This 207-nucleotide RNA was probed chemically with 2A3. Reactivities are rounded to 0.1 and cut off at 0 and 3. It was measured as part of the RMDB library M2RFPK. The 2A3 profile rests on 557 reads.
[RMDB]
RNA sequence: GGGAACGACUCGAGUAGAGUCGAAAAGCAACUUAGGAUUUUAGGCUCCCCGUGCGUGUCUCGAACCAUGCCGGGCCAAACCCACGGGGGCUGGCGGUCCCCGUGCGGACAAAAUCAAACCGCUGGAAAAACAGUUCUAGCUUCGGCUAGAACUGAAGAUCAGAUUCCAGUUCGCUGGAAUCUGAUCAAAAGAAACAACAACAACAAC
Reactivity to 2A3 in 0.01 (KOAc 150mM, MgCl2 10mM, bicine 150mM(pH8.5), 24C), signal-to-noise 1, nucleotides 027 to 156: g000c030a030a100c070u140u080a120g080g050a220u160u130u070u190a030g000g010c050u120c080c020c000c020g150u270g050c000g030u010g020u000c030u060c220g080a060a030c090c000a000u010g000c000c030g050g000g050c050c000a020a010a000c000c000c000a000c000g000g000g000g010g000c000u000g020g000c000g020g000u000c000c000c000c000g010u000g000c070g000g010a010c050a030a140a000a020u180c100a180a090a120c030c000g010c040u040g020g040a050a000a000a030a080c000a000g000u010u000c000u010a000g000c000u070u030c190g050g000c000u000a000g000a000a000c000u000g000a000a010